RNA sequence: GGGAACGACUCGAGUAGAGUCGAAAAAUUGUUUACUCCUGCGAUUGGGAAAUCGAGACGGGUAAACGCAUUCUGCCUCCCCCGCCGGAUGUGAAUAUUAUGCCGUUUGAGCAGGCCAGCGGGCAUAGCUGCUCGCAUAGUUCGCUAUGCGAGCAGCAAAAGAAACAACAACAACAAC
Reactivity to 2A3 in 0.01 (KOAc 150mM, MgCl2 10mM, bicine 150mM(pH8.5), 24C), signal-to-noise 2, nucleotides 027 to 126: a000u120u080g000u000u000u000a020c050u060c000c020u090g120c000g030a040u000u070g110g120g030a020a160a000u000c030g000a010g030a100c100g030g000g010u020a000a000a000c000g000c010a020u040u050c010u020g040c030c020u060c000c020c000c020c010g090c000c030g050g000a010u000g000u030g080a090a000u110a100u300u050a010u140g010c060c030g070u010u140u080g030a020g010c030a000g070g050c010c000a020g010c000g040g000g060c080a030u080a050
Source: RMDB library OK1LIB, as collected in RNAgym. Structure probing data (2A3) for a 177-nucleotide construct. Conditions: 150 mM KOAc, 10 mM MgCl2 and 150 mM bicine (pH 8.5), 24 C. The 2A3 profile rests on 905 reads.